[RMDB]
This 177-nucleotide RNA was probed chemically with DMS and 2A3. The 2A3 profile rests on 3,699 reads. The reactions ran in a buffer of 150 mM KOAc, 10 mM MgCl2 and 150 mM bicine (pH 8.5), at 24 C.
RNA sequence: GGGAACGACUCGAGUAGAGUCGAAAAGAUAUGGAGUGUAGACAUGGCUGGCGUCGGAAACGACGUGCAGCCAACAGCUACCUCCUAAGUCAAAACCCCGUAAUACUGUUCGCAGUAUUACGGGGAAGCCACUAAUGUUCUUCGGAACAUUAGUGGCAAAAGAAACAACAACAACAAC
Reactivity to DMS in 0.01 (KOAc 150mM, MgCl2 10mM, bicine 150mM(pH8.5), 24C), signal-to-noise 1, nucleotides 027 to 126: g010a020u000a300u000g000g010a000g010u010g020u000a000g010a050c070a170u000g010g060c010u020g020g020c000g000u000c000g000g000a060a040a140c010g010a010c010g020u000g030c000a000g040c000c020a000a000c260a120g000c000u000a010c000c000u000c000c000u000a000a060g000u000c010a070a050a100a140c000c000c000c010g000u000a000a000u000a000c000u000g000u000u020c140g000c000a000g040u000a000u000u000a000c030g030g000g010g000a010a000
Reactivity to 2A3 in 0.01 (KOAc 150mM, MgCl2 10mM, bicine 150mM(pH8.5), 24C), signal-to-noise 2, nucleotides 027 to 126: g000a020u040a040u110g000g010a000g020u300g000u070a000g020a100c040a230u150g000g000c000u010g010g020c000g010u000c010g010g020a080a080a010c010g020a010c020g030u180g180c070a010g000c000c000a000a010c000a000g000c010u010a010c000c010u000c000c000u010a120a010g040u030c020a020a050a180a300c000c010c000c000g000u000a010a000u000a000c010u000g040u070u080c300g010c220a000g000u010a000u010u000a010c000g010g000g010g000a000a000